[RMDB]
RNA sequence: GGGAACGACUCGAGUAGAGUCGAAAAGGAAACGUUACAACAAGAACAUCGCUUGCCAUGGACUACUGAGACAAGACAAGAAGCGCCAUUUAUUACGAUGUGUCAUGGUGAUACAGAACAAUAUUUGUGAAUCUCGGUACUUCGGUACCGAGAUUCAAAAAGAAACAACAACAACAAC
Reactivity to DMS in 0.01 (KOAc 150mM, MgCl2 10mM, bicine 150mM(pH8.5), 24C), signal-to-noise 1, nucleotides 027 to 126: g000g000a300a020a070c140g000u000u000a000c210a030a260c040a130a040g000a200a030c090a100u030c040g090c030u000u000g000c040c070a000u000g000g030a030c060u010a000c040u000g000a090g000a000c200a030a180g000a000c000a080a090g000a240a100g000c010g000c230c070a000u030u060u000a210u000u040a120c090g050a240u000g000u000g000u000c000a300u000g000g030u000g000a160u000a000c000a030g130a060a300c070a000a090u000a040u030u030u000g000
Reactivity to 2A3 in 0.01 (KOAc 150mM, MgCl2 10mM, bicine 150mM(pH8.5), 24C), signal-to-noise 2, nucleotides 027 to 126: g050g030a080a170a000c110g000u080u140a080c110a110a000c080a080a150g000a000a000c000a000u060c060g080c160u030u020g020c010c000a090u000g080g000a120c060u090a030c070u060g000a000g000a000c090a140a060g000a030c000a000a060g150a130a000g050c000g070c060c000a060u170u150u040a170u170u000a130c040g040a040u030g010u020g030u060c000a010u050g010g000u000g110a060u090a070c050a000g080a010a050c060a040a050u090a210u150u150u060g130